[RMDB]
RNA sequence: GGGAACGACUCGAGUAGAGUCGAAAAGGGAUGGGAUCCGAAGCCCCAUUGAGGGAUAAUACAGGCUCUCCCAUCCAACUCCUAUUCCAACACGUCCUCGUCGUACAGAGUGGUAACUUGUGUCACCUAUACUAAUGACCGUUCGCGGUCAUUAGAAGCUCUCUUAGGUGUUCGCACCUAAGAGAGCAAAAGAAACAACAACAACAAC
Reactivity to 2A3 in 0.01 (KOAc 150mM, MgCl2 10mM, bicine 150mM(pH8.5), 24C), signal-to-noise 1, nucleotides 027 to 156: g080g010g010a010u000g000g000g030a030u160c010c030g020a010a050g020c010c010c010c000a180u180u300g020a300g000g000g000a010u040a230a030u130a100c080a030g030g000c000u020c010u000c020c000c000a000u000c000c000a000a000c000u000c000c010u010a100u050u030c000c050a100a040c000a000c130g050u030c010c000u030c050g120u030c020g030u080a040c080a050g100a020g050u080g030g070u040a000a030c020u040u100g020u000g080u120c040a120c050c030u060a070u090a300c000u000a030a000u000g000a000c000c000g030u040u040c170g010c040g090g010u000c000a000u000u000a000g000a010a000
Structure probing data (2A3) for a 207-nucleotide construct. The RNA was probed in 150 mM KOAc, 10 mM MgCl2 and 150 mM bicine (pH 8.5) at 24 C. For 2A3, 575 sequencing reads were counted. It was measured as part of the RMDB library M2RFPK.